Conditions: 150 mM KOAc, 10 mM MgCl2 and 150 mM bicine (pH 8.5), 24 C. Chemical mapping of a 207-nucleotide RNA with 2A3 and DMS. For DMS the reverse transcriptase was MarathonRT. It was measured as part of the RMDB library M2RFPK.
[RMDB]
RNA sequence: GGGAACGACUCGAGUAGAGUCGAAAAUGCUAAGGGUUUGAUAUCUGCUAAAACCCGGUGAAUUCAUCAAUGCAGGUUAAGCCAAAGGGAUGUCCCGACCGGAGGCCGACAAUCCAGGGAACCGGAUAAAAGAUUGGUGGGUUCGCCCACCAAUCAAGCUUAUACAAACCUUCGGGUUUGUAUAAGCAAAAGAAACAACAACAACAAC
Reactivity to 2A3 in 0.01 (KOAc 150mM, MgCl2 10mM, bicine 150mM(pH8.5), 24C), signal-to-noise 2, nucleotides 027 to 156: u150g010c020u100a060a150g000g000g000u000u000u000g000a000u010a020u030c000u000g000c000u020a040a010a060a040c010c000c010g010g000u040g050a060a170u180u180c080a120u060c070a190a130u170g010c010a000g010g010u030u010a020a000g000c010c000a000a000a000g010g000g020a040u020g040u000c000c000c000g000a000c000c000g020g010a010g020g000c000c000g000a000c000a140a050u140c270c110a030g010g000g060a040a100c150c060g070g050a100u130a150a180a030a010g000a020u020u000g000g000u000g000g000g010u030u040c060g100c020c000c000a000c000c000a000a000u010c000a000a000
Reactivity to DMS in 0.01 (KOAc 150mM, MgCl2 10mM, bicine 150mM(pH8.5), 24C), signal-to-noise 1, nucleotides 027 to 156: u010g000c020u000a210a070g000g000g050u000u000u000g010a150u000a040u010c030u010g000c000u000a200a050a030a090c030c010c030g020g000u000g040a150a150u000u000c010a090u000c080a060a100u000g020c000a000g000g010u000u000a050a060g030c000c050a010a300a220g010g000g000a060u000g010u010c010c000c010g000a070c040c090g070g030a300g020g010c060c080g010a120c040a060a110u000c040c000a110g030g030g020a150a170c090c040g000g000a140u000a080a110a170a240g000a000u000u000g000g000u000g000g010g000u000u000c300g000c000c020c000a000c000c020a000a000u000c000a070a170